RNA sequence: GGGAACGACUCGAGUAGAGUCGAAAAUCUGUUGACACGUAAUCGUAUAGUCGAAGUCGGACUACGGUUGCCGCAACAGAAGUCAGAUUGCGUCAAGUCCGACUUGGACUAUUGUAAAAUCUGAUCACUUCAGCUUAGUAUUCGUACUGAGCUGAAGAAAAGAAACAACAACAACAAC
Reactivity to 2A3 in 0.01 (KOAc 150mM, MgCl2 10mM, bicine 150mM(pH8.5), 24C), signal-to-noise 8, nucleotides 027 to 126: u010c010u010g010u060u090g070a030c020a000c090g050u070a050a100u110c040g020u080a020u010a030g020u010c090g070a010a000g010u030c010g000g000a000c010u080a090c190g130g040u070u040g000c000c000g000c000a000a010c010a030g130a100a010g060u020c050a030g070a300u000u030g010c010g010u010c030a040a010g000u000c000c000g000a010c000u010u020g010g000a000c000u000a000u000u040g040u030a020a040a000a060u010c030u030g050a100u090c030a010
Reactivity to DMS in 0.01 (KOAc 150mM, MgCl2 10mM, bicine 150mM(pH8.5), 24C), signal-to-noise 9, nucleotides 027 to 126: u000c030u000g010u010u000g010a080c080a070c060g010u010a100a110u010c040g020u000a040u000a020g020u000c000g000a040a050g010u000c050g000g000a010c010u010a130c210g030g020u010u000g010c070c050g000c010a010a010c040a100g010a090a100g010u010c180a090g000a160u000u000g000c040g010u000c030a070a060g010u000c000c000g000a060c070u000u000g000g010a010c000u000a010u000u000g010u000a050a060a090a070u000c030u000g000a100u000c150a140